[RMDB]
RNA sequence: GGGAACGACUCGAGUAGAGUCGAAAAUCUUUUGCCUUGACCGGGGCGUUCUCAGGAGGGGGGCUUUCUAGUCCUUGGUAGUUGCUAGAAUGAAUGCACUAGUUUGAGGGAGGGAGUCUCUCCAUGGAUAUUCGGAUGUAUUCGUACAUCCGAAUAUAAAAGAAACAACAACAACAAC
Reactivity to DMS in 0.01 (KOAc 150mM, MgCl2 10mM, bicine 150mM(pH8.5), 24C), signal-to-noise 3, nucleotides 027 to 126: u050c090u000u000u010u000g000c070c010u000u020g000a070c110c030g000g000g000g000c000g010u000u000c000u000c000a150g000g020a180g030g010g010g000g010g010c000u000u000u000c010u000a010g010u050c020c010u000u000g010g000u000a010g000u030u010g040c010u000a110g020a170a130u020g000a110a090u030g000c020a080c020u010a010g000u020u020u010g000a050g020g010g050a070g000g010g000a050g000u000c010u010c020u000c000c020a100u020g010g010
Reactivity to 2A3 in 0.01 (KOAc 150mM, MgCl2 10mM, bicine 150mM(pH8.5), 24C), signal-to-noise 7, nucleotides 027 to 126: u110c060u010u050u010u040g010c000c000u020u030g050a030c000c000g000g000g010g000c000g000u010u000c010u000c010a040g070g080a150g030g000g000g000g010g010c010u000u000u000c040u050a130g140u160c000c000u010u030g030g000u020a010g010u080u210g000c010u020a060g090a300a240u200g080a160a080u210g120c000a010c010u020a020g130u110u070u190g050a010g000g020g000a020g000g000g010a000g030u000c020u000c000u010c040c000a060u090g090g030